[RMDB]
RNA sequence: GGGAACGACUCGAGUAGAGUCGAAAAGAUAUGGACUCGUAGUAGCUGCUACUCGAAGAACAUGAGGUUGAAUCGGAAACGAUUCAACCUCAUGGGAGAGUAGACCCAGCGAAACGAGUCCUAAGUCGAGCAUAUUUUAGUUCGCUAAAAUAUGCUCAAAAGAAACAACAACAACAAC
Reactivity to DMS in 0.01 (KOAc 150mM, MgCl2 10mM, bicine 150mM(pH8.5), 24C), signal-to-noise 3, nucleotides 027 to 126: g000a060u000a300u000g010g000a000c000u000c000g010u010a060g020u000a250g000c010u000g020c000u000a010c000u000c000g020a100a190g020a140a180c000a010u000g000a010g000g000u000u010g010a000a010u000c010g000g000a100a150a240c020g010a020u000u010c000a000a000c000c000u000c000a000u010g010g000g010a110g010a020g000u000a000g010a170c300c300c080a000g000c000g000a100a200a080c000g010a020g010u000c000c000u000a020a070g000u020c130
Reactivity to 2A3 in 0.01 (KOAc 150mM, MgCl2 10mM, bicine 150mM(pH8.5), 24C), signal-to-noise 2, nucleotides 027 to 126: g050a050u150a080u200g000g000a010c000u020c000g000u030a020g020u010a000g080c000u050g000c010u000a000c010u040c030g280a300a060g040a070a040c020a010u010g000a000g000g020u030u040g000a020a000u030c050g010g060a280a030a010c000g000a010u030u000c000a000a000c000c000u040c000a000u000g000g000g000a000g000a000g020u010a000g000a010c050c070c020a020g010c020g040a020a030a010c000g000a000g000u000c000c000u000a000a010g030u040c070